An RNA of 177 nucleotides, treated with DMS and 2A3 and read out base by base. 2A3 adducts were read by reverse transcription with SuperScript II with manganese. The RNA was probed in 150 mM KOAc, 10 mM MgCl2 and 150 mM bicine (pH 8.5) at 24 C.

RNA sequence: GGGAACGACUCGAGUAGAGUCGAAAAGAUAUGGAGAAGGUCAUCGAUCAUGGUCUGCAUCGGAAACGAUGCAGAGCCAUGGGAGACCCUCCUAAGUCAAACUUACGAAUCUUCGGAUUCGUAAGAAUCACCCAUACUCGUUCGCGAGUAUGGGUGAAAAAGAAACAACAACAACAAC
Reactivity to DMS in 0.01 (KOAc 150mM, MgCl2 10mM, bicine 150mM(pH8.5), 24C), signal-to-noise 2, nucleotides 027 to 126: g000a030u010a300u010g000g000a020g010a120a090g030g000u000c010a260u000c160g000a130u010c020a000u000g000g000u000c000u020g000c000a020u000c000g010g000a110a150a170c000g000a000u000g010c000a000g000a060g020c000c000a000u010g010g010g010a030g020a030c010c000c050u000c000c000u010a020a110g010u000c030a090a120a230c010u000u000a000c000g000a020a000u040c000u000u020c290g010g000a010u010u010c000g010u010a000a000g000a120a100
Reactivity to 2A3 in 0.01 (KOAc 150mM, MgCl2 10mM, bicine 150mM(pH8.5), 24C), signal-to-noise 2, nucleotides 027 to 126: g020a040u070a050u180g040g030a040g030a300a280g090g000u060c070a200u300c290g110a070u110c010a010u010g000g000u000c010u040g000c010a010u000c000g050g010a030a030a060c000g010a000u010g020c000a000g000a020g020c030c000a000u000g000g000g000a030g000a000c020c000c010u010c010c000u050a140a020g030u040c040a080a110a100c000u000u010a000c000g010a000a000u030c000u070u130c300g100g000a010u020u010c000g010u010a000a000g000a030a010